[RMDB]
RNA sequence: GGGAACGACUCGAGUAGAGUCGAAAAAUUCUUUGCCAGGCACGUUGGCUCCCACCUGUAAUCCUACCACUUUGGGAGGGUAAAGCGGGAGGAUCAUUCAAGGCCAAGAGUUUAAAACCAGCCUGGGCAACAUAAUGAGACCCCAUCUCUCCAAACAUGUCAUACCGUUAUUCGUAACGGUAUGACAAAAAGAAACAACAACAACAAC
Reactivity to 2A3 in 0.01 (KOAc 150mM, MgCl2 10mM, bicine 150mM(pH8.5), 24C), signal-to-noise 1, nucleotides 027 to 156: a000u160u070c030u030u000u050g000c020c000a070g120g000c030a000c050g090u010u010g010g000c000u000c030c030c000a060c020c010u010g060u100a000a050u010c000c030u070a220c000c010a100c080u080u030u130g070g050g040a100g000g010g060u060a030a050a000g010c020g000g000g010a030g000g030a060u030c010a060u110u240c040a080a000g050g000c050c020a070a010g070a000g000u050u130u170a020a110a000a000c050c020a010g040c000c010u020g000g080g000c010a000a010c010a010u120a140a100u120g040a040g000a040c000c000c000c000a030u000c060u000c000u020c070c000a040a050a040c020a110
An RNA of 207 nucleotides, treated with 2A3 and read out base by base. It was measured as part of the RMDB library OK3TST. The 2A3 profile rests on 517 reads. 2A3 adducts were read by reverse transcription with SuperScript II with manganese. Values cover nucleotides 27 to 156. The reactions ran in a buffer of 150 mM KOAc, 10 mM MgCl2 and 150 mM bicine (pH 8.5), at 24 C.